[RMDB]
RNA sequence: GGGAACGACUCGAGUAGAGUCGAAAAGAUAUGGAGGAUCCCAGUGCUAGAAGUCACGGUCGGAAACGACCGAAGUCUUCUUGGACCACUGGGAGUCCUCCUAAGUCAAAGGUAUGUUCGCAUACCACAUACGACCUAAGUUCGCUUAGGUCGUAUGAAAAGAAACAACAACAACAAC
Reactivity to 2A3 in 0.01 (KOAc 150mM, MgCl2 10mM, bicine 150mM(pH8.5), 24C), signal-to-noise 3, nucleotides 027 to 126: g020a010u080a050u200g000g010a010g000g000a000u000c000c000c000a010g000u000g010c010u030a010g000a030a000g010u040c000a010c090g020g000u020c020g030g040a110a070a050c020g000a010c000c000g030a070a010g010u000c000u010u000c010u010u100g060g080a100c150c000a000c020u010g000g060g000a010g000u000c000c000u010c000c000u000a020a000g000u000c040a080a040a030g020g020u010a000u030g040u020u130c240g000c140a000u010a010c000c010a020
Reactivity to DMS in 0.01 (KOAc 150mM, MgCl2 10mM, bicine 150mM(pH8.5), 24C), signal-to-noise 6, nucleotides 027 to 126: g010a070u000a300u010g000g030a010g010g000a300u000c010c000c000a020g010u000g020c020u010a030g010a010a000g000u000c030a300c020g000g000u000c000g000g000a100a110a240c000g010a020c000c010g010a030a030g020u000c000u000u000c000u000u010g010g010a160c300c010a010c000u000g000g000g000a010g000u000c010c000u020c000c000u000a010a070g010u000c030a110a100a110g030g010u000a010u000g010u000u000c240g020c030a040u000a010c000c020a300